[RMDB]
RNA sequence: GGGAACGACUCGAGUAGAGUCGAAAAAAGUCACCCAAAACGAGAUCGUGUGGACGCCGCCGUUUGAGGAUCGAAACACUAAAUUGAAUCAAACUAGCUUAUUUCUUGCGUGUCUGUCCGCUGGAGGUAAGUGAAAUUAAAGACCAGACUAAACGUGCCACGAUUCUAUCUUCGGAUAGAAUCGUGGAAAAGAAACAACAACAACAAC
Reactivity to 2A3 in 0.01 (KOAc 150mM, MgCl2 10mM, bicine 150mM(pH8.5), 24C), signal-to-noise 1, nucleotides 027 to 156: a010a000g180u140c080a130c040c010c000a100a020a030a000c140g120a070g050a140u080c070g000u030g020u040g100g000a030c050g000c000c000g020c020c080g000u000u000u000g010a010g010g010a000u040c020g010a050a070a010c060a010c090u290a080a000a200u280u300g090a010a070u040c010a000a030a040c000u000a000g030c000u030u010a010u020u050u000c010u050u130g010c010g020u070g010u020c010u000g010u000c030c010g000c010u020g010g000a010g000g000u010a000a000g030u000g060a000a000a000u110u120a020a040a050g020a000c060c040a000g010a010c020u070a000a190a110c050g060u090g050

Structure probing data (2A3) for a 207-nucleotide construct. The RNA was probed in 150 mM KOAc, 10 mM MgCl2 and 150 mM bicine (pH 8.5) at 24 C. 2A3 adducts were read by reverse transcription with SuperScript II with manganese. For 2A3, 608 sequencing reads were counted.